[RMDB]
RNA sequence: GGGAACGACUCGAGUAGAGUCGAAAACGGGAAUGCGCGUAUCCUUGUUGAUGCGGCCGGCGUGGAUGGCUUCAAAUAGCAUAUAGAGCGUCAUCAUCUUGGUCAGCGACGCCGGAUAGCGCUGUGAAAAUCCAGUACCUUUCGAGGUACUGGAUUUAAAAGAAACAACAACAACAAC
Reactivity to DMS in 0.01 (KOAc 150mM, MgCl2 10mM, bicine 150mM(pH8.5), 24C), signal-to-noise 4, nucleotides 027 to 126: c060g010g000g010a100a090u010g030c030g010c010g020u000a030u000c000c020u010u010g030u000u000g010a100u000g000c030g000g000c010c000g010g000c100g020u000g010g010a060u010g000g000c010u010u010c100a060a080a080u010a100g010c100a100u000a170u000a110g000a100g010c100g010u000c090a060u000c070a090u000c080u010u000g030g010u000c030a070g000c030g000a050c080g000c000c160g000g010a050u010a040g010c020g010c010u000g010u000g000a090
Reactivity to 2A3 in 0.01 (KOAc 150mM, MgCl2 10mM, bicine 150mM(pH8.5), 24C), signal-to-noise 2, nucleotides 027 to 126: c010g000g000g150a070a140u140g020c030g000c030g040u020a010u020c010c020u030u080g080u040u130g070a100u080g000c030g030g010c010c010g020g000c030g000u020g100g040a030u000g000g000c000u070u050c040a100a140a170u150a100g070c070a020u170a020u040a190g080a010g040c090g010u010c030a040u020c000a010u010c040u060u150g020g040u070c040a040g040c010g020a000c020g000c040c000g000g010a000u030a010g000c000g000c020u060g020u030g100a110
Source information:
An RNA of 177 nucleotides, treated with DMS and 2A3 and read out base by base. The reactions ran in a buffer of 150 mM KOAc, 10 mM MgCl2 and 150 mM bicine (pH 8.5), at 24 C. 2A3 adducts were read by reverse transcription with SuperScript II with manganese. The 2A3 profile rests on 1,586 reads. It was measured as part of the RMDB library OK2TST.